[RMDB]
RNA sequence: GGGAACGACUCGAGUAGAGUCGAAAAUCGCGGGACUCCUCGGGACAACCACAGCGACUGGGAUCGUCAUCUCGGCUAGUUCGCGUGACCGGGAGAUCCGAGCAGAGGCAUAGCGAACUGCGAAAAACGGGACCGUCUGCUUCGGCAGGCGGUCCUGAAAAGAAACAACAACAACAAC
Reactivity to DMS in 0.01 (KOAc 150mM, MgCl2 10mM, bicine 150mM(pH8.5), 24C), signal-to-noise 2, nucleotides 027 to 126: u000c060g000c040g010g000g000a040c000u000c020c000u030c040g000g000g060a100c150a100a090c150c060a050c010a040g070c030g000a020c000u000g000g000g020a000u000c200g040u010c240a110u000c000u000c010g030g030c090u000a060g000u020u000c010g010c030g010u000g020a140c010c000g000g000g000a020g000a040u020c000c010g000a060g010c020a010g010a080g030g020c080a170u030a030g000c020g010a070a050c000u000g000c000g000a050a050a030a080a080
Reactivity to 2A3 in 0.01 (KOAc 150mM, MgCl2 10mM, bicine 150mM(pH8.5), 24C), signal-to-noise 2, nucleotides 027 to 126: u130c030g010c070g030g000g050a010c000u010c040c080u170c170g000g010g080a120c070a110a020c050c000a020c050a030g020c000g020a010c010u050g030g000g050a130u060c040g070u060c100a140u020c060u000c020g010g000c020u010a020g030u100u060c000g000c000g000u030g020a100c000c000g000g000g000a020g000a000u000c000c000g000a030g000c010a000g010a010g050g000c060a090u090a060g000c000g030a040a020c010u030g000c020g040a020a010a000a000a010